[RMDB]
RNA sequence: GGGAACGACUCGAGUAGAGUCGAAAAGGUCUUACGUCAGCCAUGAGUACAACGGUAACACUCAUGGUUGUCACAGAGAUGUGACGACGCUGACCAUCUAAGUUACCGCUUGUUAGAUGGUAAGACAGAGCUUUUAAUCCUUCGGGAUUAAAAGCUCAAAAGAAACAACAACAACAAC
Reactivity to 2A3 in 0.01 (KOAc 150mM, MgCl2 10mM, bicine 150mM(pH8.5), 24C), signal-to-noise 1, nucleotides 027 to 126: g070g030u010c000u000u020a010c090g040u020c020a000g090c000c000a050u040g110a000g040u090a040c040a090a010c090g080g000u050a050a000c030a000c010u040c020a040u060g030g000u010u070g010u020c000a000c000a010g020a010g000a040u050g000u000g020a030c020g000a010c020g000c260u090g000a030c010c010a010u050c050u070a040a020g040u020u020a030c000c020g000c090u050u050g030u030u000a040g000a020u020g000g000u050a010a000g020a020c130a100
Reactivity to DMS in 0.01 (KOAc 150mM, MgCl2 10mM, bicine 150mM(pH8.5), 24C), signal-to-noise 2, nucleotides 027 to 126: g040g000u000c000u000u000a070c070g000u000c030a200g000c020c050a060u020g000a050g000u000a070c080a080a030c040g000g010u000a020a010c030a100c070u000c080a010u000g010g040u000u000g000u000c000a030c010a030g010a250g010a160u000g020u000g010a000c010g050a050c090g020c110u010g010a020c010c020a030u020c050u010a100a070g000u000u000a010c040c010g010c080u000u000g000u000u000a140g000a060u000g010g000u000a050a030g000a040c090a160

Structure probing data (2A3 and DMS) for a 177-nucleotide construct.
The DMS profile rests on 1,413 reads.
Values are in units of 0.01, from 0 to 300, in steps of 10.
The 2A3 profile rests on 1,381 reads.
The data come from the RNA Mapping Database (RMDB), library OK2TRN.
The RNA was probed in 150 mM KOAc, 10 mM MgCl2 and 150 mM bicine (pH 8.5) at 24 C.